[RMDB]
RNA sequence: GGGAACGACUCGAGUAGAGUCGAAAAUUGACUCAACCAAUGUGUGAGGUAAUCACGCGGAGUGGCUCCGGCUAUUUCUCGUGCUGCGGUAUCGGGUUUAUGGCGAUAAAACACCGGCAAACCGCUGCCCAUGCAAAGCGUUCGCGCUUUGCAUGGGAAAAGAAACAACAACAACAAC
Reactivity to DMS in 0.01 (KOAc 150mM, MgCl2 10mM, bicine 150mM(pH8.5), 24C), signal-to-noise 1, nucleotides 027 to 126: u010u030g000a080c010u000c030a140a150c050c080a110a120u000g050u000g020u000g010a050g020g010u010a070a150u000c020a020c020g010c140g000g000a050g000u010g020g000c040u020c220c150g050g010c000u000a000u000u000u000c000u000c020g000u000g010c170u000g020c000g030g030u000a110u010c000g000g010g000u000u000u000a080u020g000g010c160g000a100u010a050a050a030a010c020a090c010c000g000g000c300a080a000a080c010c000g020c010u000g000
Reactivity to 2A3 in 0.01 (KOAc 150mM, MgCl2 10mM, bicine 150mM(pH8.5), 24C), signal-to-noise 1, nucleotides 027 to 126: u000u040g080a040c010u000c010a090a050c040c040a150a220u120g170u040g000u000g060a040g110g060u140a080a080u070c000a000c010g000c030g010g010a030g040u030g010g020c000u000c070c190g070g000c020u050a040u010u120u010c050u010c030g020u030g020c070u050g000c010g060g020u030a070u090c020g000g000g000u000u020u010a070u120g090g080c120g010a020u050a100a110a020a000c150a220c050c000g000g000c060a180a170a000c000c000g000c000u000g000